[RMDB]
RNA sequence: GGGAACGACUCGAGUAGAGUCGAAAAAUACAGCGUAAUCGAGCGGAGGAAAACGGCACUCCGAAAAUCCGGUACGAUUAUGAUCCCACUGCGUCGACGGUAGAUGCAGAACCGGAUUGCCGAGGAACGAAAUAGAUUAGUUCGCUAAUCUAUUUCGAAAAGAAACAACAACAACAAC
Reactivity to 2A3 in 0.01 (KOAc 150mM, MgCl2 10mM, bicine 150mM(pH8.5), 24C), signal-to-noise 8, nucleotides 027 to 126: a000u150a020c060a030g060c020g050u060a040a050u050c030g020a030g110c030g020g030a020g020g060a060a150a020a060c020g020g000c030a010c030u010c010c010g020a080a030a000a020u010c010c000g000g050u070a070c060g030a040u040u080a040u160g070a040u010c010c010c010a020c010u000g000c000g010u010c010g030a130c110g140g160u150a070g020a010u020g000c010a000g020a020a010c020c000g000g010a020u010u040g000c010c010g020a070g030g050a080a060
Reactivity to DMS in 0.01 (KOAc 150mM, MgCl2 10mM, bicine 150mM(pH8.5), 24C), signal-to-noise 8, nucleotides 027 to 126: a080u010a110c160a100g000c040g020u000a050a040u000c020g010a180g010c040g010g000a050g010g000a050a040a080a130c070g000g000c050a070c090u000c020c010g010a040a060a060a040u000c000c000g000g000u010a120c100g010a050u000u000a030u000g010a090u000c000c010c020a230c030u000g000c000g020u000c010g000a140c180g020g010u010a120g000a020u000g000c010a020g000a130a070c090c010g000g000a030u000u000g010c050c020g010a120g000g010a100a160